[RMDB]
RNA sequence: GGGAACGACUCGAGUAGAGUCGAAAAGGCACUACCCUCCAAGACCUUGUGGCAUUGUGCCCGCAAAGAGCGUGUGUGGCCCGGUAUAUUGCUUCACUCCCAGCCCCGUGGUGGUGGGAACGACCGAACUACUCGGGUUGUUCGCAACCCGAGUAGUAAAAGAAACAACAACAACAAC
Reactivity to 2A3 in 0.01 (KOAc 150mM, MgCl2 10mM, bicine 150mM(pH8.5), 24C), signal-to-noise 4, nucleotides 027 to 126: g080g010c000a020c080u080a090c050c010c010u000c060c040a080a060g090a180c030c030u050u070g040u060g050g030c020a050u080u180g040u090g040c040c050c000g000c010a070a100a030g060a020g050c070g010u050g020u020g010u080g090g000c010c020c010g000g030u080a120u020a050u070u120g060c030u060u090c030a050c030u000c000c010c020a010g100c040c000c010c020g100u130g010g090u100g040g060u110g000g040g020a040a040c050g040a030c030c020g020a020
Reactivity to DMS in 0.01 (KOAc 150mM, MgCl2 10mM, bicine 150mM(pH8.5), 24C), signal-to-noise 2, nucleotides 027 to 126: g010g000c020a050c010u000a110c080c020c030u030c060c030a100a130g000a040c050c040u010u030g080u010g000g000c020a060u000u040g010u020g010c050c000c050g000c050a020a000a090g000a140g010c100g000u020g000u020g030u020g020g010c000c060c070g010g000u000a010u000a070u030u000g020c000u000u020c080a060c040u010c050c000c010a150g010c090c010c000c060g100u000g030g010u000g010g000u000g040g000g000a040a000c140g000a020c270c070g000a120
The record gives the reactivity of an RNA of 177 nucleotides to 2A3 and DMS. The data come from the RNA Mapping Database (RMDB), library OK1LIB. DMS adducts were read by reverse transcription with MarathonRT. High DMS reactivity at an A or C suggests that its Watson-Crick edge is free.